[RMDB]
RNA sequence: GGGAACGACUCGAGUAGAGUCGAAAAGAUAUGGAUUGGGAGGACAUGAUGAAUCGGAAACGAUGAACAUCAACAGCCUUUAAUCCUAAGUCAAACCUGAAGACGCAGUUCGCUGCGUCUUCAGGAACUAGAUUGAAGACUUCGGUCUUCAAUCUAGAAAAGAAACAACAACAACAAC
Reactivity to 2A3 in 0.01 (KOAc 150mM, MgCl2 10mM, bicine 150mM(pH8.5), 24C), signal-to-noise 2, nucleotides 027 to 126: g010a000u050a040u100g000g000a000u020u050g150g090g010a020g010g030a020c060a130u100g020a000u020g020a110a000u000c000g000g020a050a050a010c020g000a010u050g100a150a080c000a000u040c010a030a170c020a100g050c000c000u000u000u040a000a000u010c010c010u000a100a010g050u000c010a030a050a140c000c000u000g000a000a000g010a010c010g020c020a010g000u040u200c170g170c180u000g030c000g000u000c010u020u010c000a000g000g000a000a010
Reactivity to DMS in 0.01 (KOAc 150mM, MgCl2 10mM, bicine 150mM(pH8.5), 24C), signal-to-noise 3, nucleotides 027 to 126: g000a010u000a300u000g000g010a020u010u000g020g030g000a010g000g000a070c140a230u000g000a000u010g000a090a020u000c000g020g000a110a060a140c000g010a010u000g020a120a090c020a050u000c000a030a070c180a230g010c010c000u000u000u010a020a010u000c000c000u020a020a080g000u010c020a060a090a150c010c000u000g000a010a000g010a000c000g020c000a030g020u010u000c290g010c000u000g000c000g000u000c000u000u000c010a000g010g000a010a020